[RMDB]
RNA sequence: GGGAACGACUCGAGUAGAGUCGAAAAGAUAUGGACGUACGAAUCGAUAAGAUGGUAUCGGAAACGAUACCCAUCUUUUGACGAUUACGUACGUCCUAAGUCAAACUGUCUUCUUCGGAAGACAGAAGUAGAUGAAUGAGUUCGCUCAUUCAUCUACAAAAGAAACAACAACAACAAC
Reactivity to 2A3 in 0.01 (KOAc 150mM, MgCl2 10mM, bicine 150mM(pH8.5), 24C), signal-to-noise 8, nucleotides 027 to 126: g030a000u040a010u110g000g000a010c010g000u000a000c000g020a010a000u010c020g070a100u040a270a020g000a000u010g010g000u000a000u000c010g010g000a050a040a020c010g000a000u000a010c040c010c000a010u000c000u050u080u040u130g300a170c080g000a000u000u050a160c000g000u000a000c000g000u000c000c000u000a010a000g000u000c010a020a030a080c000u000g000u000c010u010u000c000u030u060c300g180g010a000a000g000a000c000a000g000a030a020
Reactivity to DMS in 0.01 (KOAc 150mM, MgCl2 10mM, bicine 150mM(pH8.5), 24C), signal-to-noise 7, nucleotides 027 to 126: g010a030u000a300u000g000g000a010c000g020u000a010c010g010a060a010u010c010g010a150u010a020a010g010a010u000g000g010u000a000u000c000g020g000a080a040a130c010g010a020u000a000c170c050c070a010u000c000u000u000u000u000g010a250c140g010a010u000u000a100c010g010u000a000c000g010u000c000c000u000a000a060g010u000c030a130a120a260c010u000g000u000c000u000u000c000u000u020c210g020g010a020a000g000a010c010a000g010a030a090
Notes
Conditions: 150 mM KOAc, 10 mM MgCl2 and 150 mM bicine (pH 8.5), 24 C. This 177-nucleotide RNA was probed chemically with 2A3 and DMS. Values cover nucleotides 27 to 126. As a SHAPE reagent, 2A3 marks flexible, mostly unpaired nucleotides at the ribose 2'-OH. For DMS, 14,047 sequencing reads were counted.